Chemical mapping of a 177-nucleotide RNA with 2A3 and DMS. For DMS the reverse transcriptase was MarathonRT. The RNA was probed in 150 mM KOAc, 10 mM MgCl2 and 150 mM bicine (pH 8.5) at 24 C. For 2A3 the reverse transcriptase was SuperScript II with manganese. It was measured as part of the RMDB library OK2TST.
RNA sequence: GGGAACGACUCGAGUAGAGUCGAAAAAGAGGCUCAAGUUUAGGUGGAGCCAGCGUGAGUUCAAGAUACGCAUGCUAGGCUUGAAGAAGAAGUAUGACCCACUUGAGGGUGCACCAAUGGCGCGUGGCAAUGUGUACGCUUUCGAGCGUACACAUUGAAAAGAAACAACAACAACAAC
Reactivity to 2A3 in 0.01 (KOAc 150mM, MgCl2 10mM, bicine 150mM(pH8.5), 24C), signal-to-noise 3, nucleotides 027 to 126: a000g050a050g040g000c020u020c060a040a070g020u060u170u210a050g050g020u060g080g010a000g020c000c000a000g000c010g030u010g010a060g000u080u110c150a160a020g060a220u170a080c020g000c040a020u000g000c030u050a090g020g000c020u090u110g030a050a040g050a070a000g040a040a000g100u090a090u200g050a040c010c010c000a030c030u010u020g050a040g050g010g010u040g040c010a030c060c010a070a090u080g050g000c010g020c050g050u090g060g000
Reactivity to DMS in 0.01 (KOAc 150mM, MgCl2 10mM, bicine 150mM(pH8.5), 24C), signal-to-noise 4, nucleotides 027 to 126: a070g000a110g020g010c010u010c030a040a060g000u000u010u010a060g000g010u000g010g000a050g000c000c010a020g010c010g040u000g010a050g000u010u000c130a120a150g010a100u020a020c020g010c000a010u000g000c000u000a120g040g000c010u000u000g000a100a090g010a120a070g000a080a060g030u000a090u010g010a100c040c000c050a070c090u000u010g000a080g000g010g020u010g000c070a040c030c050a020a070u000g000g010c040g010c100g030u000g010g000